[RMDB]
RNA sequence: GGGAACGACUCGAGUAGAGUCGAAAAAGCGUCGCGAUUCGUCGCGACGCUAAAAACCUUUGUGAGCUAAGGUAGCGAUUUAGGACCCAUUGGGUCCUAUUUUCGCUAUAAUCUUAGGCUCACUCUGGUAAAAGAGUGAGAGAUUCGUCUCUCACUCGCGAAAGGAUAAAUUCGUUUAUCCUUUCGCAAAAGAAACAACAACAACAAC
Reactivity to 2A3 in 0.01 (KOAc 150mM, MgCl2 10mM, bicine 150mM(pH8.5), 24C), signal-to-noise 2, nucleotides 027 to 156: a000g020c030g010u030c010g010c010g020a020u050u060c090g050u010c010g160c010g000a000c000g060c000u000a010a010a000a010a000c000c000u000u000u020g000u000g000a000g000c000u000a000a010g010g020u000a000g000c000g000a000u010u000u000a000g000g000a000c010c030c210a300u290u300g020g000g000u020c000c000u010a000u000u020u000u020c000g000c000u000a010u010a010a000u040c000u000u000a040g200g040c000u000c000a000c000u020c000u010g010g020u050a100a060a050a030g010a000g000u000g010a010g000a000g000a020u010u080c220g080u020c070u000c000u000c000a000c000u000c000
Reactivity to DMS in 0.01 (KOAc 150mM, MgCl2 10mM, bicine 150mM(pH8.5), 24C), signal-to-noise 1, nucleotides 027 to 156: a040g020c010g040u000c000g060c020g050a100u000u000c300g020u000c040g070c000g050a010c020g080c000u000a000a010a050a170a050c000c010u000u000u010g020u000g030a000g010c000u020a030a030g040g010u000a000g010c000g010a050u000u000u010a020g010g000a060c050c000c000a300u020u000g080g020g020u000c000c010u000a000u000u000u000u000c000g010c000u000a010u000a130a100u020c000u000u000a080g030g000c000u000c000a000c010u000c010u000g010g030u000a070a080a070a080g010a040g040u000g010a060g020a010g010a080u000u000c300g020u000c010u010c000u010c000a010c000u020c000

An RNA of 207 nucleotides, treated with 2A3 and DMS and read out base by base.
2A3 is a SHAPE reagent: it acylates the 2'-hydroxyl of flexible nucleotides of all four kinds.
The RNA was probed in 150 mM KOAc, 10 mM MgCl2 and 150 mM bicine (pH 8.5) at 24 C.
For 2A3, 1,832 sequencing reads were counted.